[RMDB]
RNA sequence: GGGAACGACUCGAGUAGAGUCGAAAAAGCGUCAUAUAGUAAAUAUACGUUACCGUUACUGUCUACCCAAAAUAUCGCUAAGUAGUUAUUUGGCAUUAUGCUAAUGUUAAACGUAUAGCCGGAAGCACGGAGCAUGUAUGUUCGCAUACAUGCUCCGAAAAGAAACAACAACAACAAC
Reactivity to 2A3 in 0.01 (KOAc 150mM, MgCl2 10mM, bicine 150mM(pH8.5), 24C), signal-to-noise 1, nucleotides 027 to 126: a000g040c030g050u090c070a050u130a020u060a220g240u130a100a180a020u050a040u020a000c000g000u010u010a060c000c050g020u020u060a030c040u030g100u120c030u040a080c000c000c000a030a010a090a160u090a010u030c000g000c030u040a000a080g010u050a040g030u240u070a130u100u030u030g030g000c050a040u180u000a050u300g020c000u020a010a040u050g010u070u160a060a100a000c040g000u060a020u040a040g030c040c010g010g090a050a000g060c040a050
Reactivity to DMS in 0.01 (KOAc 150mM, MgCl2 10mM, bicine 150mM(pH8.5), 24C), signal-to-noise 2, nucleotides 027 to 126: a090g020c040g050u010c100a020u020a040u000a120g000u010a100a040a170u000a030u000a000c040g020u010u000a070c300c030g010u000u010a030c080u010g030u000c100u000a130c260c010c040a060a030a100a050u000a010u000c070g040c050u000a090a120g000u000a040g000u000u000a050u000u010u000g030g000c070a100u000u000a050u000g000c190u000a000a020u000g000u000u000a050a040a040c010g040u000a040u000a040g020c030c060g010g010a050a060g000c080a220
An RNA of 177 nucleotides, treated with 2A3 and DMS and read out base by base. The 2A3 profile rests on 1,098 reads. It was measured as part of the RMDB library OK2TRN. 2A3 adducts were read by reverse transcription with SuperScript II with manganese.